[RMDB]
Conditions: 150 mM KOAc, 10 mM MgCl2 and 150 mM bicine (pH 8.5), 24 C.
Chemical mapping of a 207-nucleotide RNA with 2A3.
2A3 adducts were read by reverse transcription with SuperScript II with manganese.
RNA sequence: GGGAACGACUCGAGUAGAGUCGAAAACAGUGGCUUUCGAGCCACUGAAAAAAACCUUUGUGGUCUAUACAGGGAGCGAUUCAGACCCAUUGGGUCUGAUUCGCAUCGAUCUGUAUGAGACCACUCUGGUAAAAACAGGGACAUUCGUGUCCCUGAACCUCGAUAUUACCUUCGGGUAAUAUCGAGGAAAAGAAACAACAACAACAAC
Reactivity to 2A3 in 0.01 (KOAc 150mM, MgCl2 10mM, bicine 150mM(pH8.5), 24C), signal-to-noise 2, nucleotides 027 to 156: c000a000g000u000g000g000c000u020u160u280c260g100a020g000c000c000a000c000u000g000a000a000a000a000a000a000a000c000c010u000u000u020g000u000g000g000u000c020u000a010u000a010c000a000g000g000g070a040g000c000g000a000u000u020c010a010g010a000c010c010c090a300u170u300g000g000g010u030c010u010g010a000u000u000c020g000c010a080u040c000g010a030u040c000u010g000u030a000u110g060a020g010a010c000c010a000c000u000c000u000g000g000u050a100a100a000a000a030c000a000g010g010g000a000c000a010u050u080c250g090u050g000u040c000c000c000u000g000a000a000